[RMDB]
RNA sequence: GGGAACGACUCGAGUAGAGUCGAAAAAGGUAGUUGGCUGUAAAUGCAGAUAAUGGAUUUACUGGCUUUCUGACAAAAACCGAUAACAUGGAUUCUAUCCCAAGUACUGAGAGAAAUAGUAGAAAGAGGGCAGAAUUUGCUAUCUCAGGGUAAUACAACGUCCAGUCAUAUUCGUAUGACUGGACGUAAAAGAAACAACAACAACAAC
Reactivity to 2A3 in 0.01 (KOAc 150mM, MgCl2 10mM, bicine 150mM(pH8.5), 24C), signal-to-noise 2, nucleotides 027 to 156: a000g020g000u000a040g040u020u000g030g030c000u000g000u000a020a020a010u100g030c010a030g060a130u270a170a230u180g010g000a030u050u030u010a020c050u050g000g000c020u080u090u020c000u040g040a040c080a010a130a000a000a050c000c000g050a000u050a050a080c110a040u120g110g000a010u190u000c010u100a110u000c010c000c010a000a000g090u030a070c000u010g010a000g010a000g020a100a150a140u060a030g030u040a010g050a050a130a000g080a000g010g000g010c070a000g040a110a100u040u070u100g010c000u000a010u080c010u010c030a000g010g000g010u110a020a090u110a180c080a190

This 207-nucleotide RNA was probed chemically with 2A3. The RNA was probed in 150 mM KOAc, 10 mM MgCl2 and 150 mM bicine (pH 8.5) at 24 C.